Conditions: 150 mM KOAc, 10 mM MgCl2 and 150 mM bicine (pH 8.5), 24 C. This 177-nucleotide RNA was probed chemically with DMS and 2A3. DMS adducts were read by reverse transcription with MarathonRT.
[RMDB]
RNA sequence: GGGAACGACUCGAGUAGAGUCGAAAAACGAGUAUGUACAGGGGUGAGUUGACCUGUCAUCUAGACUGCUGACCAUCAACUCACCGGUCAGCUGGAUGAUGUCCACAGAGUACGACAUCAGUACUCAGUGUAAUGAGUAGUUCGCUGCUCGUUACACAAAAGAAACAACAACAACAAC
Reactivity to DMS in 0.01 (KOAc 150mM, MgCl2 10mM, bicine 150mM(pH8.5), 24C), signal-to-noise 9, nucleotides 027 to 126: a120c080g000a050g010u010a020u010g010u040a050c020a030g000g000g010g010u010g000a050g010u000u010g000a040c080c070u010g000u000c010a030u010c040u010a060g010a130c120u010g000c040u000g000a020c010c270a240u010c080a040a050c080u010c070a050c110c070g000g000u010c050a040g010c010u010g000g010a100u010g000a040u010g000u000c010c070a080c170a110g010a090g010u010a040c090g000a100c140a070u030c080a100g010u000a010c000u000c010a140
Reactivity to 2A3 in 0.01 (KOAc 150mM, MgCl2 10mM, bicine 150mM(pH8.5), 24C), signal-to-noise 9, nucleotides 027 to 126: a000c050g000a010g020u070a040u130g070u070a020c020a020g050g020g010g050u050g030a050g010u010u020g030a030c020c050u030g010u000c000a010u000c010u030a050g140a200c090u070g010c010u010g010a010c010c010a030u060c020a030a050c030u010c050a030c020c000g000g030u030c010a020g010c010u020g020g010a040u050g000a010u020g030u010c020c020a090c060a090g070a020g070u080a030c050g030a020c040a070u050c030a030g010u010a010c000u000c010a010

Values cover nucleotides 27 to 126. The 2A3 profile rests on 151,558 reads. The data come from the RNA Mapping Database (RMDB), library OK1LIB.